Source: RMDB library RFMREP, as collected in RNAgym. An RNA of 177 nucleotides, treated with DMS and 2A3 and read out base by base.
RNA sequence: GGGAACGACUCGAGUAGAGUCGAAAACAUGUCAGUACUGGUGAGUCUGGAUGCUGAUGAUAUGUUAGUUCCCAUCAGCUCCAAGGCUGAUCAGUAGUGAUGUGAAAGAAGGAUCUUCGGAUCCUUCGACAUAUAGUCGGUUCGCCGACUAUAUGUCAAAAGAAACAACAACAACAAC
Reactivity to DMS in 0.01 (KOAc 150mM, MgCl2 10mM, bicine 150mM(pH8.5), 24C), signal-to-noise 6, nucleotides 027 to 126: c010a020u000g010u000c000a010g000u000a010c000u000g010g010u000g000a020g030u000c000u000g000g010a040u010g030c000u000g010a020u000g010a110u010a070u010g010u010u010a180g010u000u000c050c040c000a040u000c000a010g000c000u000c010c030a030a080g020g000c000u000g000a010u000c030a020g010u010a010g010u000g000a020u000g010u000g000a100a110a140g010a010a000g000g000a010u000c000u000u010c200g010g000a010u000c000c000u000u000c000
Reactivity to 2A3 in 0.01 (KOAc 150mM, MgCl2 10mM, bicine 150mM(pH8.5), 24C), signal-to-noise 8, nucleotides 027 to 126: c000a000u020g010u010c000a040g220u010a000c000u000g030g010u030g110a010g010u000c000u000g020g020a060u280g000c000u000g010a010u010g010a040u060a070u300g250u170u150a150g050u150u080c010c000c010a000u000c000a000g000c000u000c000c010a080a080g010g000c000u070g140a010u010c000a000g010u000a010g040u000g000a010u020g020u010g050a150a130a040g000a000a000g000g010a000u000c010u040u080c240g060g010a000u000c000c000u000u000c020
The DMS profile rests on 16,715 reads. DMS adducts were read by reverse transcription with MarathonRT. For 2A3, 22,944 sequencing reads were counted.